[RMDB]
RNA sequence: GGGAACGACUCGAGUAGAGUCGAAAAGAUAUGGAUCCCUGGGCAGCGACGACGUCGGAAACGACAUCAGCUGACCCACAUGGGAUCCUAAGUCAAACGUCCUAGUACGUUCGCGUACUAGGACGAAUCACAUAUGCUAGUUCGCUAGCAUAUGUGAAAAAGAAACAACAACAACAAC
Reactivity to 2A3 in 0.01 (KOAc 150mM, MgCl2 10mM, bicine 150mM(pH8.5), 24C), signal-to-noise 8, nucleotides 027 to 126: g010a030u080a030u130g000g000a000u010c000c000c000u020g010g040g000c000a010g000c010g120a160c130g000a020c030g130u010c010g010g050a050a080a040c010g000a000c010a020u020c010a010g000c000u050g270a300c000c080c000a020c030a090u120g000g000g000a000u000c000c000u010a050a010g030u020c060a100a040a070c020g000u000c000c000u000a000g000u000a000c020g010u020u090c300g010c010g150u000a000c000u000a000g000g000a000c000g010a000a010
Reactivity to DMS in 0.01 (KOAc 150mM, MgCl2 10mM, bicine 150mM(pH8.5), 24C), signal-to-noise 8, nucleotides 027 to 126: g010a030u000a300u000g000g000a000u000c000c000c000u010g010g010g020c010a010g000c000g010a100c260g000a020c040g010u000c000g000g010a080a090a220c000g010a010c000a050u000c010a200g010c000u000g000a110c010c000c010a050c300a080u000g000g000g010a010u000c000c000u000a010a070g010u000c030a060a110a220c020g010u000c000c000u010a000g010u000a000c000g000u000u000c220g030c010g020u000a010c000u000a000g000g010a000c000g010a010a050